[RMDB]
RNA sequence: GGGAACGACUCGAGUAGAGUCGAAAAUCCUAAGUCAGCGAUUGUCAGGAUGACCCACUGCGAAGAACAUAUCGGAAACGAUAUGGGAGCAGUGUGCGUCAUCCUUGGAUUUAUCGCUGAUAUGGAAAAGGAAUCGUCUCUUCGGAGACGAUUCCAACAUUUACGCGUACUUCGGUACGCGUAAAUGAAAAGAAACAACAACAACAAC
Reactivity to DMS in 0.01 (KOAc 150mM, MgCl2 10mM, bicine 150mM(pH8.5), 24C), signal-to-noise 1, nucleotides 027 to 156: u000c000c020u000a070a300g010u000c000a000g020c030g040a000u000u000g010u000c010a030g000g000a020u010g000a000c000c000c000a020c010u010g000c030g020a060a130g000a090a240c000a020u010a020u000c010g010g000a220a170a300c050g010a030u000a000u030g000g000g000a280g020c000a000g000u000g040u000g030c110g000u010c000a000u000c000c000u000u000g010g020a020u010u010u000a000u000c020g090c010u000g020a020u000a110u000g020g000a100a100a130a040g000g010a000a000u000c000g040u000c000u000c000u000u000c300g040g000a030g000a010c010g030a000u000u000c010c000a010a070
Reactivity to 2A3 in 0.01 (KOAc 150mM, MgCl2 10mM, bicine 150mM(pH8.5), 24C), signal-to-noise 2, nucleotides 027 to 156: u030c000c000u020a110a010g030u010c000a000g010c000g000a010u030u010g010u020c000a000g000g000a000u000g000a000c000c000c010a000c000u000g020c010g190a300a060g010a060a020c000a010u000a000u000c010g010g070a070a050a070c020g000a000u000a010u000g000g000g020a020g010c000a000g000u010g050u050g030c020g040u000c000a000u010c000c000u000u010g000g000a000u080u170u160a030u000c000g010c010u000g000a000u000a030u020g050g040a040a070a090a130g020g000a000a000u010c000g000u000c000u000c000u010u120c300g110g000a000g000a000c000g000a000u000u000c000c000a000a000
This 207-nucleotide RNA was probed chemically with DMS and 2A3. It was measured as part of the RMDB library RNAMAK. 2A3 is a SHAPE reagent: it acylates the 2'-hydroxyl of flexible nucleotides of all four kinds. For DMS the reverse transcriptase was MarathonRT. The 2A3 profile rests on 3,145 reads.